[RMDB]
This 177-nucleotide RNA was probed chemically with DMS. Conditions: 150 mM KOAc, 10 mM MgCl2 and 150 mM bicine (pH 8.5), 24 C.

RNA sequence: GGGAACGACUCGAGUAGAGUCGAAAAGAUAUGGAAAUUCCCCAAUAAUGUAGAUCGCGAUAAGGUGCAUUCGGAAACGAAUGGCACCUUUUGACGCGAAUUACAUUAUUGGGGAAUUUCCUAAGUCGUAAGAUUCAUAGUUCGCUAUGAAUCUUACAAAAGAAACAACAACAACAAC
Reactivity to DMS in 0.01 (KOAc 150mM, MgCl2 10mM, bicine 150mM(pH8.5), 24C), signal-to-noise 3, nucleotides 027 to 126: g000a070u010a300u000g000g000a010a000a020u010u000c000c000c000c010a000a010u000a000a010u000g000u010a010g010a040u000c010g030c000g010a160u000a030a020g010g020u010g020c000a050u000u000c000g010g000a130a150a300c000g010a000a000u000g030g010c000a000c000c000u000u000u010u000g020a200c090g010c000g000a010a080u000u000a000c000a010u000u000a000u000u000g020g030g010g010a000a000u000u000u000c000c000u000a020a070g010u010c120